[RMDB]
RNA sequence: GGGAACGACUCGAGUAGAGUCGAAAACCUCCAAACUUCGGUUUGGAGGAAAAGGAGCCAAAAUAAGAACGGAAUGGGAAGACGGAACCCAAGUCUAUAAAAAAAGUACCAUGUUCGCAUGGUACAAUCUCAAUUUAGUCUUCGGACUAAAUUGAGAAAAAGAAACAACAACAACAAC
Reactivity to DMS in 0.01 (KOAc 150mM, MgCl2 10mM, bicine 150mM(pH8.5), 24C), signal-to-noise 1, nucleotides 027 to 126: c000c090u000c000c000a000a020a020c000u000u010c190g060g020u000u000u000g000g020a000g000g000a040a040a060a110g020g010a170g000c000c020a070a080a060a100u020a060a070g020a110a080c110g000g000a030a090u000g000g000g000a040a050g000a080c060g010g000a060a110c010c010c000a050a110g020u000c050u000a120u010a010a000a090a060a080a040a140g000u000a000c000c000a030u000g000u010u000c290g020c000a000u000g000g020u000a000c000a020a060
Reactivity to 2A3 in 0.01 (KOAc 150mM, MgCl2 10mM, bicine 150mM(pH8.5), 24C), signal-to-noise 1, nucleotides 027 to 126: c020c010u040c000c010a020a000a000c000u040u030c190g110g010u000u000u000g010g000a000g000g000a000a020a020a020g050g020a020g030c050c040a030a000a030a170u250a050a100g100a080a010c080g040g000a050a030u020g010g020g000a040a020g090a020c040g040g060a020a060c000c010c000a000a030g030u000c020u070a140u280a110a110a000a020a000a000a020g000u010a000c000c000a030u030g030u040u040c180g000c060a000u010g000g000u000a000c000a000a030